[RMDB]
The record gives the reactivity of an RNA of 207 nucleotides to DMS and 2A3. Source: RMDB library OK3TST, as collected in RNAgym.

RNA sequence: GGGAACGACUCGAGUAGAGUCGAAAAUCUUCUUUGAUAACUGCAGCUCCAGCUAUAGCUGGUACGAUUAUCGCUGCUAAGAAUGCUUCAAAAUAGUUUUUUUCUUUCCAGAUAUGUAUUCAAAUUUAGCUCCACGUCUUGGACAAACUUCAUUUGCACAAUGGAAUCAGUUCGCUGAUUCCAUUGUAAAAGAAACAACAACAACAAC
Reactivity to DMS in 0.01 (KOAc 150mM, MgCl2 10mM, bicine 150mM(pH8.5), 24C), signal-to-noise 2, nucleotides 027 to 156: u010c020u010u000c040u000u010u010g020a090u010a000a050c030u000g020c060a080g010c060u010c170c000a020g010c010u000a150u010a200g000c000u000g010g000u010a050c050g010a090u000u020a030u000c030g000c000u000g010c020u000a090a140g010a120a090u000g020c000u000u000c050a100a120a200a120u000a050g010u000u000u010u000u000u010u000c040u020u000u000c060c000a090g020a090u000a050u000g000u000a040u020u000c040a080a110a170u000u000u000a070g000c020u000c020c010a040c050g010u000c020u000u000g030g020a110c080a080a040a080c060u010u000c060a250u010u000u000g040c120
Reactivity to 2A3 in 0.01 (KOAc 150mM, MgCl2 10mM, bicine 150mM(pH8.5), 24C), signal-to-noise 4, nucleotides 027 to 156: u020c050u120u020c040u080u080u040g080a100u070a210a070c070u060g010c010a000g000c000u020c020c050a000g010c010u110a090u120a300g000c010u010g000g020u060a030c070g050a060u080u130a090u270c070g010c010u000g000c000u010a030a000g030a070a080u090g010c040u070u070c050a050a080a080a140u070a070g030u060u010u000u000u020u020u080c020u040u020u030c020c000a010g040a130u120a070u220g070u060a170u090u060c020a040a060a080u040u110u080a030g030c040u030c050c020a050c040g180u040c050u140u110g020g020a020c010a000a090a020c020u110u060c070a140u010u030u160g020c000